[RMDB]
RNA sequence: GGGAACGACUCGAGUAGAGUCGAAAACGACAGCUGGGCGCCGCCCAUCACCGCGGACUUGGCGCUGGGCCAGGCGAAUAGGAAGCGCGGGUCGUAGGCGCGCCCGCACAUGCCGUAGUGCCCGGCGCGCGCACCCCUAAUUCGUUAGGGGUGCGCGAAAAGAAACAACAACAACAAC
Reactivity to 2A3 in 0.01 (KOAc 150mM, MgCl2 10mM, bicine 150mM(pH8.5), 24C), signal-to-noise 1, nucleotides 027 to 126: c030g130a080c050a050g070c030u200g010g030g000c030g080c070c080g010c010c020c010a040u120c050a040c050c020g040c050g100g070a070c020u040u120g200g040c000g000c010u020g020g040g000c020c000a000g010g000c010g060a090a110u200a250g140g030a120a060g040c030g000c010g030g000g070u180c100g020u100a080g050g030c070g010c000g030c010c000c000g030c010a020c010a050u240g010c010c010g040u070a080g000u030g100c000c030c000g010g000c030g000
Reactivity to DMS in 0.01 (KOAc 150mM, MgCl2 10mM, bicine 150mM(pH8.5), 24C), signal-to-noise 1, nucleotides 027 to 126: c020g020a100c160a040g000c110u000g030g000g000c030g020c130c070g010c000c010c070a050u010c070a140c060c050g010c020g000g020a080c040u010u000g040g010c000g040c040u000g050g000g010c010c000a090g000g000c020g020a090a140u000a110g020g000a050a150g000c040g000c010g010g000g000u000c050g010u010a070g000g040c050g030c060g000c040c000c020g020c020a000c130a140u010g010c000c000g000u000a100g010u000g000c010c000c050g060g010c050g030